[RMDB]
RNA sequence: GGGAACGACUCGAGUAGAGUCGAAAACUCGGCCUUCUUGUGGAGGGCGUCCUUCAGCUGGGUGAUCUCCGGCAAGAGGGAGUUGGUGAUCUCCGUGACCGCGGCGAUGUGCAUCACCGAGGGGAAAGUGUCGUUGGAGGACUGCGCCUGAUUGCAGGCCAGUCAUGCGAUUCGUCGCAUGACUGGCAAAAGAAACAACAACAACAAC
Reactivity to 2A3 in 0.01 (KOAc 150mM, MgCl2 10mM, bicine 150mM(pH8.5), 24C), signal-to-noise 1, nucleotides 027 to 156: c010u010c010g050g060c010c000u040u000c010u000u060g010u060g020g000a010g000g040g030c000g010u090c000c000u140u210c110a190g110c150u100g030g020g060u040g000a080u050c010u030c070c000g000g000c020a030a010g040a020g020g030g000a000g030u070u120g020g020u010g000a010u040c020u000c010c000g010u030g150a120c030c120g000c000g040g010c090g070a090u050g040u100g190c000a000u040c020a020c040c040g040a060g010g000g000g040a000a100a120g030u050g010u070c020g090u040u020g000g000a000g000g010a040c050u060g020c050g080c000c040u140g140a160u080u150g010c080a030g060